[RMDB]
RNA sequence: GGGAACGACUCGAGUAGAGUCGAAAAAAAAAAUGUGUAGGAUAGGUGGGAGGCUUUGAAGUGUGGACGCCAGUCUGCAUGGAGCCGACCUUGAAAUACCACCCUUUAAUGAGUAAAACAAAAAAAAGGUUAGCUAACUAUUCGUAGUUAGCUAACCAAAAGAAACAACAACAACAAC
Reactivity to DMS in 0.01 (KOAc 150mM, MgCl2 10mM, bicine 150mM(pH8.5), 24C), signal-to-noise 1, nucleotides 027 to 126: a000a000a100a070a000a000u000g020u020g000u000a030g000g000a060u000a030g020g020u000g000g000g020a100g020g020c000u000u000u060g010a100a090g020u000g010u000g000g020a020c020g000c150c130a040g020u020c000u000g010c000a000u010g000g010a000g000c000c000g000a020c300c000u000u000g000a040a030a040u000a090c020c000a010c010c000c000u010u010u010a020a110u000g040a090g000u030a050a060a040a070c090a000a060a010a020a110a050a210a070
Chemical mapping of a 177-nucleotide RNA with DMS. Reactivities are rounded to 0.1 and cut off at 0 and 3. DMS adducts were read by reverse transcription with MarathonRT. The reactions ran in a buffer of 150 mM KOAc, 10 mM MgCl2 and 150 mM bicine (pH 8.5), at 24 C.